The record gives the reactivity of an RNA of 170 nucleotides to 2A3 and DMS.
2A3 adducts were read by reverse transcription with SuperScript II with manganese.
RNA sequence: GGGAACGACUCGAGUAGAGUCGAAAAACCCCUUCAGCGAACAGAGGAGUCUCUACCUCGGAGGAGAAAGACCGUAGCGAUGGGGGAGAUGCUAGGAGUAGGCGGCGACCGAAGCGAGGAGGAAAGCAGGGCGGGAAGUUCGCUUCCCGCAAAAGAAACAACAACAACAAC
Reactivity to 2A3 in 0.01 (KOAc 150mM, MgCl2 10mM, bicine 150mM(pH8.5), 24C), signal-to-noise 5, nucleotides 027 to 129: a000c020c000c010c000u070u100c060a050g000c020g030a050a030c030a020g030a030g090g000a020g060u020c000u000c000u130a150c010c010u010c030g010g000a010g010g020a060g060a000a080a010g050a010c010c040g070u120a020g060c060g080a120u100g000g000g010g020g000a010g000a020u100g030c050u060a040g000g050a020g030u090a040g090g030c030g000g000c040g040a050c000c020g000a010a000g020c040g000a010g000g000a000g000g000a000a000a020g010c040a050g030g000
Reactivity to DMS in 0.01 (KOAc 150mM, MgCl2 10mM, bicine 150mM(pH8.5), 24C), signal-to-noise 4, nucleotides 027 to 129: a000c050c020c020c000u040u040c070a090g000c030g060a080a030c040a090g000a090g040g020a100g030u030c050u010c070u000a030c060c000u000c080g040g030a030g050g030a080g000a030a020a060g020a040c060c050g030u060a000g000c120g010a070u040g010g030g010g030g000a020g000a060u050g010c030u030a060g060g000a060g030u000a050g030g090c080g010g030c110g040a090c000c070g010a090a060g050c100g000a070g010g030a000g030g100a060a030a000g030c140a040g040g040
About this RNA:
The DMS profile rests on 12,005 reads.